Structure probing data (DMS and 2A3) for a 170-nucleotide construct.
Values cover nucleotides 27 to 129.
DMS adducts were read by reverse transcription with MarathonRT.
For DMS, 2,585 sequencing reads were counted.
It was measured as part of the RMDB library 15KLIB.
The RNA was probed in 150 mM KOAc, 10 mM MgCl2 and 150 mM bicine (pH 8.5) at 24 C.
[RMDB]
RNA sequence: GGGAACGACUCGAGUAGAGUCGAAAAUUGGUACAUUAUGUUCGGGCCUAUCGUUCCCAUAUGGAUGACCUGCGUCUAUACAGUUGCAAUGUGCUUUAGACACUUCUUCUGGGUUUUAGCUUAUUUUAUGGGUGGCCGUUCGCGGCCACCAAAAGAAACAACAACAACAAC
Reactivity to DMS in 0.01 (KOAc 150mM, MgCl2 10mM, bicine 150mM(pH8.5), 24C), signal-to-noise 2, nucleotides 027 to 129: u000u010g020g000u000a030c070a020u070u000a000u080g010u000u000c060g010g000g000c300c000u000a080u000c050g060u050u050c000c030c000a000u050a090u000g010g000a090u020g070a180c150c080u060g090c000g010u000c120u000a120u040a100c070a020g070u000u030g010c030a090a010u060g000u040g010c040u000u000u060a010g000a130c080a010c030u000u000c120u020u000c130u100g030g000g030u010u010u000u000a060g000c080u000u000a060u100u000u020u000a030u010g000
Reactivity to 2A3 in 0.01 (KOAc 150mM, MgCl2 10mM, bicine 150mM(pH8.5), 24C), signal-to-noise 1, nucleotides 027 to 129: u050u000g040g010u010a070c030a000u050u000a070u090g300u060u050c000g000g060g010c010c000u000a000u000c040g000u000u010c000c000c000a000u040a030u020g080g000a100u000g130a070c000c080u040g010c000g000u000c000u000a050u040a060c040a020g060u020u020g030c090a100a140u120g110u000g000c000u130u090u070a050g050a000c000a020c000u000u000c020u060u030c020u010g090g000g090u000u000u000u000a030g000c000u030u030a000u090u060u140u030a020u080g090